[RMDB]
RNA sequence: GGGAACGACUCGAGUAGAGUCGAAAAUUUGGACUCAAUAUUGGGUUUAGGGCAAGGUGUGGGCUCAGUAUCAGGUUCAGAUCUGUAUGGGGAGGAAAUGGGGUCCUAGAGUGGUAUUAGGUUCAUGCUAGGGCUGGGAGCCACUAGAAGGAUCUGGACAAUAAUGCUACUUCGGUAGCAUUAUUGUAAAAGAAACAACAACAACAAC
Reactivity to 2A3 in 0.01 (KOAc 150mM, MgCl2 10mM, bicine 150mM(pH8.5), 24C), signal-to-noise 1, nucleotides 027 to 156: u050u050u110g080g000a030c020u030c150a060a150u240a160u260u060g010g000g030u080u080u130a090g010g000g000c090a060a020g020g010u120g040u040g150g000g000c000u020c010a020g010u090a010u120c020a020g040g040u050u130c020a000g010a100u020c020u010g060u100a100u050g000g000g000g060a000g000g040a080a150a030u130g020g000g000g060u000c010c000u090a070g030a010g060u000g050g010u120a080u130u110a100g000g030u040u060c010a000u050g000c040u040a000g010g020g030c020u020g010g050g000a030g040c000c000a050c020u000a020g010a050a050g080g010a000u020c030u030g000g000
Structure probing data (2A3) for a 207-nucleotide construct. Source: RMDB library OK3TST, as collected in RNAgym. The RNA was probed in 150 mM KOAc, 10 mM MgCl2 and 150 mM bicine (pH 8.5) at 24 C. As a SHAPE reagent, 2A3 marks flexible, mostly unpaired nucleotides at the ribose 2'-OH.